[RMDB]
RNA sequence: GGGAACGACUCGAGUAGAGUCGAAAAGAAACGCAAGGCCGCUGACCGACGGGAUAUUGUGGGGCUUACCAGAGGGGACGCGGCGUUAUCACUUGCCUUUUAAGCCGACCGUCUGGGCUGCAUACAAACCACCCAACUAUCUUCGGAUAGUUGGGAAGAUCUGUUGUCAGUUCGCUGACAACAGAUCAAAAGAAACAACAACAACAAC
Reactivity to 2A3 in 0.01 (KOAc 150mM, MgCl2 10mM, bicine 150mM(pH8.5), 24C), signal-to-noise 1, nucleotides 027 to 156: g010a000a010a000c030g000c010a010a030g110g010c000c000g130c020u050g080a040c010c000g040a020c060g060g000g030a060u140a160u220u190g020u050g000g000g000g060c040u090u190a090c010c000a000g000a060g120g010g010g030a010c090g010c000g050g030c030g010u070u040a010u010c010a020c060u010u000g000c010c010u030u100u010u130a050a000g020c030c000g060a100c020c010g100u030c000u080g000g010g000c000u040g000c010a030u100a180c020a020a030a070c020c000a010c010c000c000a000a000c000u000a000u000c000u000u000c030g080g000a000u000a000g000u000u000g000g000g000a000a000
An RNA of 207 nucleotides, treated with 2A3 and read out base by base. The 2A3 profile rests on 619 reads. Values cover nucleotides 27 to 156. For 2A3 the reverse transcriptase was SuperScript II with manganese.